[RMDB]
RNA sequence: GGGAACGACUCGAGUAGAGUCGAAAAUUCAGCAAUAAAGGCAUAAUAAAACUUCUCAUCUGAACAAAAUAACUUGGUCUUUUGGUAAAUACGGAAUUAAGGGGGUGGCUCUCCCAUCAUGAUCCCAGAUGGCCUCAUGGUAGCUACCAUUAAAUUACUGAUAGGUGACGUUCGCGUCACCUAUCAGAAAAGAAACAACAACAACAAC
Reactivity to 2A3 in 0.01 (KOAc 150mM, MgCl2 10mM, bicine 150mM(pH8.5), 24C), signal-to-noise 1, nucleotides 027 to 156: u110u060c010a010g030c070a070a050u130a220a010a060g000g010c030a030u220a130a080u120a080a300a090a170c070u090u110c080u000c040a240u000c010u070g040a070a070c050a060a190a150a100u200a190a050c070u020u120g040g000u040c000u030u030u030u040g000g000u010a000a090a000u150a200c050g050g000a010a030u040u100a250a200g080g000g000g020g030u010g000g000c050u040c000u010c050c000c000a030u030c000a010u110g050a040u020c000c000c000a000g010a050u050g030g000c000c010u000c010a000u050g000g000u010a000g000c010u070a010c000c000a000u080u230a030a120a090u170u070a120
Description: Structure probing data (2A3) for a 207-nucleotide construct. For 2A3, 321 sequencing reads were counted. The reactions ran in a buffer of 150 mM KOAc, 10 mM MgCl2 and 150 mM bicine (pH 8.5), at 24 C. Source: RMDB library OK3TST, as collected in RNAgym.